[RMDB]
RNA sequence: GGGAACGACUCGAGUAGAGUCGAAAAAUACAGACUAGCCGUAGUGGCGAACGACCUGAUAGGGUGCUGCAGAGGCCCACUAUUAGCCUAGUAUAAAAAUCUCUGCUGAAAAUAAAAAUAAAUGAAACACUGUACAUAUGUUCGCAUAUGUACAGUGAAAAGAAACAACAACAACAAC
Reactivity to 2A3 in 0.01 (KOAc 150mM, MgCl2 10mM, bicine 150mM(pH8.5), 24C), signal-to-noise 1, nucleotides 027 to 126: a000u060a000c050a000g240a030c010u020a000g030c000c020g040u040a010g000u040g020g010c000g010a100a050c080g000a000c010c000u020g080a140u260a200g040g010g000u030g000c000u100g040c000a000g040a000g000g000c000c000c000a040c000u010a040u020u060a010g000c030c020u030a000g030u140a150u110a300a040a000a040a090u030c000u000c000u010g000c040u030g050a000a020a010a140u230a050a060a030a000a020u150a020a100a060u170g080a000a020a010
Reactivity to DMS in 0.01 (KOAc 150mM, MgCl2 10mM, bicine 150mM(pH8.5), 24C), signal-to-noise 2, nucleotides 027 to 126: a110u000a070c120a120g020a000c010u000a040g010c080c080g020u000a050g030u000g010g000c010g000a100a160c090g000a060c020c010u010g010a130u000a060g000g000g040u000g010c010u000g000c010a030g000a020g010g000c020c000c000a030c020u000a030u000u000a090g020c060c030u000a010g010u000a070u000a010a040a050a030a070u010c000u000c000u000g010c000u000g000a080a080a100a070u010a010a050a110a080a120u000a060a040a060u000g000a100a060a140